RNA sequence: GGGAACGACUCGAGUAGAGUCGAAAACAGACAUUCACUAGUGAUGUGACAGCAGUUGAGGUAGGCUCAGUGUAUCAAUGUAACAGUGAAAGGGGGUAUGCAACUGCAAGGAAGGGGAAAUUGGAGAUGCUAUGCUACCAUUCGUGGUAGCAUAGCAAAAAGAAACAACAACAACAAC
Reactivity to 2A3 in 0.01 (KOAc 150mM, MgCl2 10mM, bicine 150mM(pH8.5), 24C), signal-to-noise 3, nucleotides 027 to 126: c060a020g110a030c010a090u010u010c010a010c020u060a080g050u040g140a040u070g080u050g020a020c040a020g010c000a010g050u040u020g040a040g000g110u150a090g060g110c000u040c030a010g030u000g040u070a040u090c050a010a040u180g110u170a010a030c010a040g010u030g090a010a010a030g010g000g020g050g000u030a030u060g080c060a110a090c070u070g050c060a020a020g000g040a030a020g000g000g000g000a020a040a000u130u160g020g050a100g000a020
Reactivity to DMS in 0.01 (KOAc 150mM, MgCl2 10mM, bicine 150mM(pH8.5), 24C), signal-to-noise 3, nucleotides 027 to 126: c110a160g010a050c070a090u000u010c060a040c030u030a100g040u000g010a110u020g010u000g000a130c140a120g000c010a020g000u000u000g020a050g020g040u010a040g010g010c090u000c050a020g020u020g000u000a060u020c090a060a070u040g010u000a040a110c140a070g010u000g010a060a050a130g020g000g010g000g040u000a040u050g000c060a030a120c060u010g000c140a080a100g010g000a050a040g000g000g000g000a030a060a140u020u010g000g010a080g010a160
Structure probing data (2A3 and DMS) for a 177-nucleotide construct. Conditions: 150 mM KOAc, 10 mM MgCl2 and 150 mM bicine (pH 8.5), 24 C. For DMS, 4,478 sequencing reads were counted.